[RMDB]
RNA sequence: GGGAACGACUCGAGUAGAGUCGAAAAAAAGAAGGAGAAUUGAAGGGCAAGUUUAAGGACUGUGUGCUGGUACCAACAAAUGCUCUCCUAAAGUUUGUCAACAUUCCUGAAUUACUAAGAAUGGCUGAAUAAUGCUACCCUUCGGGGUAGCAUUAUUAAAAGAAACAACAACAACAAC
Reactivity to DMS in 0.01 (KOAc 150mM, MgCl2 10mM, bicine 150mM(pH8.5), 24C), signal-to-noise 2, nucleotides 027 to 126: a080a010a080g010a140a060g010g000a070g000a090a060u010u000g000a120a120g010g000g020c060a030a050g000u000u000u000a170a080g010g000a040c070u010g000u000g010u000g020c100u000g010g000u000a070c250c070a060a140c050a000a080a050u000g030c110u010c050u000c020c010u020a050a080a070g010u000u000u000g000u000c040a060a020c110a150u010u010c030c010u000g010a110a090u030u030a090c100u010a060a040g000a110a020u010g000g020c070u030g000